[RMDB]
RNA sequence: GGGAACGACUCGAGUAGAGUCGAAAAGCAGCGUAGAGUCAUCAUCACGGAACCGCUGAGACGUGGCCGUCUGCCCAUCCUCGGUUAAAUCUAGCAGACUGGUUUCCGGGUGCGCUUUGCCUGUCGUGCUGCCCGGCGACGAGACCUAACGGCGAGGCAACUAUGUAAUCUUCGGAUUACAUAGUUGAAAAGAAACAACAACAACAAC
Reactivity to 2A3 in 0.01 (KOAc 150mM, MgCl2 10mM, bicine 150mM(pH8.5), 24C), signal-to-noise 7, nucleotides 027 to 156: g010c030a010g020c020g060u100a030g030a060g130u070c040a090u050c010a030u060c020a080c110g060g040a040a030c040c020g000c050u030g030a010g010a060c100g040u050g010g000c030c020g020u020c020u030g010c000c000c000a050u060c020c010u030c020g020g020u100u160a060a110a090u130c120u110a050g020c010a010g030a050c010u060g030g000u010u030u010c010c000g000g000g010u020g020c150g000c020u030u030u050g030c010c000u040g010u050c010g010u030g000c010u030g020c000c000c000g000g010c020g010a010c020g010a010g040a050c020c080u070a050a010c010g030g010c030g020a010g000g000
Reactivity to DMS in 0.01 (KOAc 150mM, MgCl2 10mM, bicine 150mM(pH8.5), 24C), signal-to-noise 3, nucleotides 027 to 156: g000c020a050g030c070g030u010a070g020a140g000u000c040a120u010c060a110u010c050a150c070g010g000a110a070c040c020g000c070u000g000a110g010a040c050g010u000g030g000c020c040g000u000c050u010g000c000c040c040a070u010c030c020u000c040g000g010u010u000a030a090a090u010c080u000a100g000c020a120g000a060c050u000g020g000u010u000u000c010c010g020g010g000u000g010c200g010c010u000u000u000g010c040c020u000g000u000c060g010u010g000c000u010g010c000c000c000g030g010c000g010a050c020g000a160g000a060c060c020u010a060a060c060g020g020c010g020a120g020g020
This 207-nucleotide RNA was probed chemically with 2A3 and DMS. The DMS profile rests on 11,077 reads. For DMS the reverse transcriptase was MarathonRT. Conditions: 150 mM KOAc, 10 mM MgCl2 and 150 mM bicine (pH 8.5), 24 C. Source: RMDB library ARCHII, as collected in RNAgym.